[RMDB]
RNA sequence: GGGAACGACUCGAGUAGAGUCGAAAAUAUUGAACAGGUUACUAAUCCCGCUGCGAGACGCACUGGAUCUUCAGGAAUCCUUAAUAACAGUAACCAAUGAGACGAGCGUUACUCCAGAUCUGGGACAUACAAUCUGCGUAUUCGUACGCAGAUUGUAAAAAGAAACAACAACAACAAC
Reactivity to DMS in 0.01 (KOAc 150mM, MgCl2 10mM, bicine 150mM(pH8.5), 24C), signal-to-noise 2, nucleotides 027 to 126: u000a090u000u000g040a110a030c130a150g000g020u000u000a020c040u000a120a050u010c010c010c020g040c080u000g010c100g010a050g010a100c080g000c040a200c140u010g000g010a080u000c060u000u010c160a060g020g040a060a070u020c040c020u000u030a070a100u000a090a110c120a050g010u000a010a020c000c000a050a090u010g000a090g000a110c140g010a110g000c020g000u030u000a080c050u010c000c030a030g000a090u000c040u000g030g020g010a110c300a150
Reactivity to 2A3 in 0.01 (KOAc 150mM, MgCl2 10mM, bicine 150mM(pH8.5), 24C), signal-to-noise 1, nucleotides 027 to 126: u050a010u050u130g000a020a020c040a150g010g030u030u020a020c030u080a070a140u040c000c010c060g000c040u030g030c130g000a050g000a060c030g010c030a000c000u000g040g010a040u060c010u130u150c100a010g000g150a120a070u060c010c000u020u080a100a030u070a150a070c030a000g000u010a050a010c000c020a020a170u240g020a030g020a040c100g040a030g030c010g020u070u060a130c010u090c010c000a020g030a040u050c040u170g020g000g010a010c000a000
Annotation: The data come from the RNA Mapping Database (RMDB), library OK2TRN. This 177-nucleotide RNA was probed chemically with DMS and 2A3. For 2A3, 986 sequencing reads were counted. Values cover nucleotides 27 to 126.